[RMDB]
RNA sequence: GGGAACGACUCGAGUAGAGUCGAAAAUUUCUAUGUUUAGGUACACAAGUACUUACCAUUGUGUUACAGUUGGCUACAGUGUUCAGUACAGUAACAUGCUGUACAGGUUUGUAGCCUGGGAGCAAUAGGCUAUACCAUAAGGCCUAUGUGUGUAGUACGUGAUCAUACCUUUCGAGGUAUGAUCACGAAAAGAAACAACAACAACAAC
Reactivity to DMS in 0.01 (KOAc 150mM, MgCl2 10mM, bicine 150mM(pH8.5), 24C), signal-to-noise 1, nucleotides 027 to 156: u000u000u000c060u010a130u010g030u020u010u000a050g000g060u000a000c020a040c160a110a180g000u030a050c030u000u010a080c120c010a070u010u010g000u000g010u000u000a150c060a060g010u000u010g040g040c010u000a000c000a030g000u000g010u000u000c100a180g000u000a000c000a050g020u000a160a230c290a210u000g020c020u000g010u000a020c000a120g030g000u000u000u000g010u000a030g010c030c000u010g010g030g000a300g020c060a040a030u000a030g030g000c050u000a110u000a140c110c160a100u000a110a180g000g040c040c010u010a000u010g020u000g020u000g000u010a080g020u150a210
Reactivity to 2A3 in 0.01 (KOAc 150mM, MgCl2 10mM, bicine 150mM(pH8.5), 24C), signal-to-noise 1, nucleotides 027 to 156: u070u020u000c060u020a110u150g140u030u150u100a080g030g000u090a020c150a020c010a090a080g120u230a150c070u100u180a010c000c040a060u010u030g060u000g000u010u060a040c070a100g030u080u120g030g000c000u000a000c000a050g060u080g200u280u120c000a000g000u000a000c000a070g000u010a300a300c030a120u280g000c000u000g000u020a020c000a030g000g170u070u100u000g010u000a000g000c030c000u000g000g020g000a080g000c040a040a160u050a020g020g000c020u050a060u050a290c040c080a060u110a140a150g060g000c000c010u030a000u030g200u000g000u000g010u000a010g030u130a090